[RMDB]
RNA sequence: GGGAACGACUCGAGUAGAGUCGAAAACAUCUUUCCACCCUACACAGUGACUCCAGCUUGGGAGGGGCAGGGCUAGGCUGAGCCAGCACUCCCUGUGGUGUCUGCCUGCCACGUGCAGCUCUGGAGUAAAACCUGGAGAAGUUCGCUUCUCCAGGAAUCAUAUAUUAGUGUUCGCACUAAUAUAUGAAAAAGAAACAACAACAACAAC
Reactivity to 2A3 in 0.01 (KOAc 150mM, MgCl2 10mM, bicine 150mM(pH8.5), 24C), signal-to-noise 2, nucleotides 027 to 156: c020a090u080c060u070u110u050c040c020a050c010c010c010u100a050c080a020c020a110g080u050g110a030c000u000c000c010a010g030c050u100u090g030g000g040a020g030g010g050g000c020a070g000g060g000c040u140a030g070g000c030u070g050a030g100c070c020a010g000c010a010c020u020c000c000c000u020g010u020g010g020u040g050u020c040u030g020c010c010u050g030c020c020a130c130g090u190g010c010a010g000c020u020c010u050g010g000a010g010u010a010a040a000a020c000c000u000g010g000a000g000a000a010g010u060u140c170g010c120u000u000c000u000c010c000a000g000g000a000a010
Reactivity to DMS in 0.01 (KOAc 150mM, MgCl2 10mM, bicine 150mM(pH8.5), 24C), signal-to-noise 3, nucleotides 027 to 156: c070a120u000c070u000u000u000c010c020a090c060c040c010u010a100c070a150c090a110g030u000g010a090c010u000c010c010a040g020c110u000u000g010g000g000a120g010g010g010g050c020a090g010g020g020c020u000a060g020g020c070u010g010a230g020c020c020a110g030c030a080c020u000c010c010c010u000g000u000g020g010u010g000u010c030u000g000c050c030u010g040c000c000a060c060g020u000g010c040a070g020c040u000c030u000g000g010a090g020u000a060a050a070a170c000c000u000g000g000a040g010a020a020g010u000u010c300g020c000u000u000c000u000c010c000a000g010g000a020a020
Background
Chemical mapping of a 207-nucleotide RNA with 2A3 and DMS. Values cover nucleotides 27 to 156. The DMS profile rests on 10,368 reads. As a SHAPE reagent, 2A3 marks flexible, mostly unpaired nucleotides at the ribose 2'-OH. Conditions: 150 mM KOAc, 10 mM MgCl2 and 150 mM bicine (pH 8.5), 24 C.